[RMDB]
Conditions: 150 mM KOAc, 10 mM MgCl2 and 150 mM bicine (pH 8.5), 24 C.
The record gives the reactivity of an RNA of 177 nucleotides to DMS.
For DMS, 4,951 sequencing reads were counted.
Reactivities are given for positions 27 through 126.
High DMS reactivity at an A or C suggests that its Watson-Crick edge is free.
For DMS the reverse transcriptase was MarathonRT.
RNA sequence: GGGAACGACUCGAGUAGAGUCGAAAAGAUAUGGAUACGCAAUUUGAGAGCCAAAUGGGAGAUGGUCGGUCGGAAACGACCGGACCAUCGACGAUCAUUCGGCUCUCAAAUUGCGUAUCCUAAGUCACAUCACCAUUAUGUUCGCAUAAUGGUGAUGAAAAGAAACAACAACAACAAC
Reactivity to DMS in 0.01 (KOAc 150mM, MgCl2 10mM, bicine 150mM(pH8.5), 24C), signal-to-noise 3, nucleotides 027 to 126: g020a040u000a300u000g010g020a010u010a010c000g010c010a000a000u000u000u000g000a020g000a020g020c000c000a010a020a000u000g010g010g020a070g010a030u000g010g000u000c000g010g010u000c010g000g000a120a100a300c010g000a010c010c000g050g010a030c010c000a000u000c000g000a070c300g000a030u010c010a020u000u000c080g020g020c010u000c000u000c000a000a010a000u000u000g020c000g010u000a000u000c000c010u000a010a060g010u000c040a280